[RMDB]
RNA sequence: GGGAACGACUCGAGUAGAGUCGAAAACGUUCAAAAACUCAUUAAUGAUUCAUGACAUUCCUUUUGGCAAGUCUCAAGAGAUAACAAACCUGAUUCCUGAUAACAUGCUGAUUGAGGAAGUAUACAAGGUUGUUCCUAAGUUAGCAAAAAUGAGAAAACUCUCGACAGUAUUCGUACUGUCGAGAGUAAAAGAAACAACAACAACAAC
Reactivity to 2A3 in 0.01 (KOAc 150mM, MgCl2 10mM, bicine 150mM(pH8.5), 24C), signal-to-noise 1, nucleotides 027 to 156: c000g000u010u040c000a080a090a090a070a070c030u000c020a000u000u070a130a010u180g120a020u100u020c050a060u120g060a030c000a050u060u010c000c000u000u020u040u130g020g060c090a130a010g060u010c000u040c000a000a000g070a020g020a100u100a130a030c020a100a040a000c020c010u060g070a110u120u000c000c000u050g040a060u030a050a090c030a010u030g010c000u040g040a090u150u030g000a020g030g000a000a000g000u120a070u000a110c000a030a030g050g010u020u020g080u000u080c010c010u000a070a000g060u040u050a020g000c000a100a000a120a040a160u010g040a000g000a010a040a040